The record gives the reactivity of an RNA of 177 nucleotides to DMS.
[RMDB]
RNA sequence: GGGAACGACUCGAGUAGAGUCGAAAAGAUAUGGAUCGCAUACCUGAUCCGUGAUGGACAUGCUGCAGGCUCGGAAACGAGCCUGACCAGCAACAGCCAUACGGAUCAGGUAUGCGAUCCUAAGUCACUUGAUUUAGUACUUCGGUACUAAAUCAAGAAAAGAAACAACAACAACAAC
Reactivity to DMS in 0.01 (KOAc 150mM, MgCl2 10mM, bicine 150mM(pH8.5), 24C), signal-to-noise 2, nucleotides 027 to 126: g000a050u000a300u000g010g020a010u000c010g000c000a010u000a020c020c000u020g000a020u000c010c020g010u000g040a000u000g010g020a100c120a250u000g000c010u010g020c010a030g010g000c010u000c000g040g010a070a160a270c000g000a020g000c000c000u000g000a020c300c010a000g010c010a020a090c300a170g000c000c010a010u000a040c020g010g010a030u000c000a010g000g020u000a000u000g000c000g010a000u000c000c000u000a000a070g000u010c050a290

Background:
Conditions: 150 mM KOAc, 10 mM MgCl2 and 150 mM bicine (pH 8.5), 24 C. Source: RMDB library TTRINS, as collected in RNAgym.